Overview: Structure probing data (2A3 and DMS) for a 177-nucleotide construct. The reactions ran in a buffer of 150 mM KOAc, 10 mM MgCl2 and 150 mM bicine (pH 8.5), at 24 C. For DMS, 14,442 sequencing reads were counted.
RNA sequence: GGGAACGACUCGAGUAGAGUCGAAAAUACGAUCCAGAAGUGGACCGGGAAUAUUCAUCGUAUUGGCGGUCGUCACGAACAUGACGUUCGAUAGAUCAUACUCAACUUCAAGGUAGUGAUCCAUGAAGUAUAUCACUGGUUUCGACCAGUGAUAUACAAAAGAAACAACAACAACAAC
Reactivity to 2A3 in 0.01 (KOAc 150mM, MgCl2 10mM, bicine 150mM(pH8.5), 24C), signal-to-noise 9, nucleotides 027 to 126: u080a010c020g020a040u050c010c020a020g030a100a010g100u090g050g000a010c020c010g050g060g140a030a030u060a050u140u190c080a120u100c080g020u030a030u020u050g260g030c010g010g000u020c020g050u050c020a010c050g030a030a010c040a080u210g170a050c090g010u030u020c010g020a010u070a080g010a010u030c020a020u090a080c050u050c090a080a080c040u100u060c070a070a050g030g000u020a030g090u030g070a030u000c020c010a050u100g070a100a020
Reactivity to DMS in 0.01 (KOAc 150mM, MgCl2 10mM, bicine 150mM(pH8.5), 24C), signal-to-noise 9, nucleotides 027 to 126: u000a080c070g010a060u000c030c030a120g010a120a080g010u000g010g010a020c020c050g000g000g000a070a050u000a060u000u000c230a090u010c180g000u000a050u000u000g010g020c020g010g000u000c010g010u000c060a080c040g010a070a040c100a110u010g000a090c160g000u000u000c010g010a120u000a060g010a040u000c060a080u000a070c090u000c080a080a080c080u000u000c070a090a080g010g000u000a070g020u000g010a070u000c010c060a090u010g010a080a080
The data come from the RNA Mapping Database (RMDB), library OK2TST.